[RMDB]
RNA sequence: GGGAACGACUCGAGUAGAGUCGAAAAGAUAUGGAGGCUGUAGGUAGGAUAUCGGAAACGAUAUUCCUAUAAUCUACGGCCUCCUAAGUCAAACAACAGUUAAUCUGUUCGCAGAUUAACUGUUGAACAAACCCGUGUUGUUCGCAACACGGGUUUGAAAAGAAACAACAACAACAAC
Reactivity to DMS in 0.01 (KOAc 150mM, MgCl2 10mM, bicine 150mM(pH8.5), 24C), signal-to-noise 1, nucleotides 027 to 126: g000a030u000a300u010g000g010a000g030g020c000u010g000u010a000g010g040u030a010g000g020a040u000a000u000c000g010g000a160a040a210c010g010a000u000a010u000u000c010c000u000a030u000a300a050u020c000u000a020c000g010g010c000c010u010c000c000u010a000a060g020u010c050a120a120a210c020a000a000c000a000g010u000u000a020a010u000c000u010g030u000u020c120g030c000a010g010a020u000u000a000a000c000u000g000u000u010g040a060a190

Chemical mapping of a 177-nucleotide RNA with DMS. High DMS reactivity at an A or C suggests that its Watson-Crick edge is free. The RNA was probed in 150 mM KOAc, 10 mM MgCl2 and 150 mM bicine (pH 8.5) at 24 C.